[RMDB]
RNA sequence: GGGAACGACUCGAGUAGAGUCGAAAAAAGGUUAAUCCUGCCGACAAAUGGUACCCAGAUAUGCCUGACAGCCUUGUUGAUGUCGUGCUGCAGGCCGAGGAUGAUUUCCUCAAAGUGGUGGGCGCCCAGAGUUCUUUGGAUUCGUCCAAAGAACUCUAAAAGAAACAACAACAACAAC
Reactivity to DMS in 0.01 (KOAc 150mM, MgCl2 10mM, bicine 150mM(pH8.5), 24C), signal-to-noise 1, nucleotides 027 to 126: a020a060g000g020u010u010a100a140u010c000c020u000g020c040c020g030a110c140a140a080a060u010g020g010u000a090c010c000c010a120g020a120u000a060u000g000c000c000u010g000a190c080a010g020c020c040u000u010g010u020u010g020a170u000g020u000c120g030u030g010c000u000g030c040a020g010g010c010c180g010a020g020g010a030u000g000a160u020u000u000c000c000u010c000a090a040a070g000u000g010g000u000g010g000g020c010g000c010c050c160